Annotation
The record gives the reactivity of an RNA of 177 nucleotides to 2A3 and DMS. The RNA was probed in 150 mM KOAc, 10 mM MgCl2 and 150 mM bicine (pH 8.5) at 24 C. Reactivities are rounded to 0.1 and cut off at 0 and 3.
[RMDB]
RNA sequence: GGGAACGACUCGAGUAGAGUCGAAAAAGAAAGCAAGGCGAAGGGAAGCCACCACCGCGGGAGCUGUACGUUGUACGAGAGCUCAGCUUUAACCUUCCCAAACCGCGGAAAGGGAAAACCCAAAAAACCCAUGGUUAAGAUUCGUCUUAACCAUGGGAAAAGAAACAACAACAACAAC
Reactivity to 2A3 in 0.01 (KOAc 150mM, MgCl2 10mM, bicine 150mM(pH8.5), 24C), signal-to-noise 2, nucleotides 027 to 126: a000g030a020a000a000g000c020a030a120g000g010c030g110a100a070g020g000g010a090a000g030c010c010a010c010c000a010c020c000g040c000g020g000g000a010g010c010u010g030u040a040c050g140u100u230g130u210a040c050g010a030g010a030g240c010u000c010a000g000c000u010u020u000a030a030c000c030u000u030c010c000c000a050a030a020c000c010g000c020g020g010a090a070a050g000g000g030a010a010a020a050c020c010c030a080a040a000a010a030a050
Reactivity to DMS in 0.01 (KOAc 150mM, MgCl2 10mM, bicine 150mM(pH8.5), 24C), signal-to-noise 2, nucleotides 027 to 126: a090g000a080a030a000g030c040a220a130g020g010c050g000a200a080g020g000g010a140a110g020c020c020a090c000c010a040c030c000g030c020g000g010g000a000g030c000u010g040u000a050c000g000u000u000g020u010a080c040g010a160g010a060g000c000u000c000a090g000c000u000u000u000a070a070c210c090u000u000c000c000c010a060a070a050c000c000g050c000g030g000a030a060a040g010g000g010a060a040a070a160c020c010c040a020a060a050a050a070a110